[RMDB]
RNA sequence: GGGAACGACUCGAGUAGAGUCGAAAAUCGAGAGGGUCAAGUAACGUAAAAGGCGUUGCUAGUGGAGGUUUUGGAACCGAAACCUCUGCUACAUCAUCAAAUUGCGGGGACAUCCUAAAGCUGGUGCUACUAAGCAGGUGCCGAAACGACUUGUGGCGUUUUUGUUUAUCUUCGGAUAAACAAAAACAAAAGAAACAACAACAACAAC
Reactivity to 2A3 in 0.01 (KOAc 150mM, MgCl2 10mM, bicine 150mM(pH8.5), 24C), signal-to-noise 5, nucleotides 027 to 156: u110c050g010a020g020a010g060g040g010u050c050a050a030g030u040a120a010c030g020u020a040a080a060a080g090g000c020g000u010u020g030c070u000a000g000u010g000g000a000g010g000u010u000u010u040g090g080a110a110c150c040g010a010a010a000c000c000u000c010u000g000c000u010a010c000a030u050c010a000u010c010a020a050a160u110u100g030c030g000g020g000g020a010c010a040u080c020c030u090a110a050a030g050c050u030g010g030u040g010c010u020a070c020u050a060a030g020c030a020g050g030u030g050c020c020g030a070a060a030c040g040a040c030u060u050g020u050g100g010c060
Reactivity to DMS in 0.01 (KOAc 150mM, MgCl2 10mM, bicine 150mM(pH8.5), 24C), signal-to-noise 1, nucleotides 027 to 156: u010c030g030a140g000a110g010g020g040u000c020a070a090g020u010a040a030c040g020u000a020a050a120a170g000g020c000g000u000u010g020c060u000a040g050u000g000g010a020g030g000u020u020u000u000g030g000a080a210c180c060g000a030a040a020c000c000u000c000u000g030c020u000a040c020a050u000c030a110u000c080a030a080a160u020u000g040c080g000g010g000g010a080c030a030u010c000c050u010a050a020a120g030c020u000g000g010u000g020c020u000a100c040u010a050a100g000c030a060g020g030u000g010c000c010g000a070a040a000c060g010a030c000u000u000g040u000g020g040c090

The record gives the reactivity of an RNA of 207 nucleotides to 2A3 and DMS. Values are in units of 0.01, from 0 to 300, in steps of 10. For DMS, 3,127 sequencing reads were counted. For DMS the reverse transcriptase was MarathonRT.